[RMDB]
RNA sequence: GGGAACGACUCGAGUAGAGUCGAAAAGAUCUUGGCUCACUGCAACCUCCGCCUCUCAGGCUCAAGUGAUUCUCAUGCCUCAGCCUCCCAAGUAGCUGGCAUUACAGGCGCCCACCACCAAGGCUAAGUUCUUUGUCAAAUUCGUUUGACAAAGAACAAAAGAAACAACAACAACAAC
Reactivity to DMS in 0.01 (KOAc 150mM, MgCl2 10mM, bicine 150mM(pH8.5), 24C), signal-to-noise 3, nucleotides 027 to 126: g000a050u010c040u000u000g010g020c030u000c030a050c060u000g010c080a080a090c040c000u000c020c030g000c040c010u000c040u010c050a070g020g010c040u000c050a060a060g020u000g010a080u000u000c020u000c040a100u000g010c040c020u000c060a060g030c030c020u010c010c020c010a050a090g020u000a070g020c020u000g010g000c110a060u000u000a060c130a070g010g000c070g020c030c030c010a090c060c030a080c040c040a100a090g010g000c100u010a070a160
Reactivity to 2A3 in 0.01 (KOAc 150mM, MgCl2 10mM, bicine 150mM(pH8.5), 24C), signal-to-noise 1, nucleotides 027 to 126: g020a030u070c010u020u060g060g040c030u010c040a070c020u060g050c070a030a050c000c000u010c020c030g020c010c000u060c000u050c030a010g060g000c010u020c070a100a010g020u000g070a110u120u000c020u030c000a020u090g000c030c000u060c020a010g000c000c000u020c000c000c000a020a020g020u040a010g040c040u000g040g000c010a010u050u080a050c000a050g040g000c020g050c000c010c010a010c020c000a030c000c030a050a040g070g000c030u090a110a000
The record gives the reactivity of an RNA of 177 nucleotides to DMS and 2A3. The RNA was probed in 150 mM KOAc, 10 mM MgCl2 and 150 mM bicine (pH 8.5) at 24 C. DMS adducts were read by reverse transcription with MarathonRT. For 2A3 the reverse transcriptase was SuperScript II with manganese.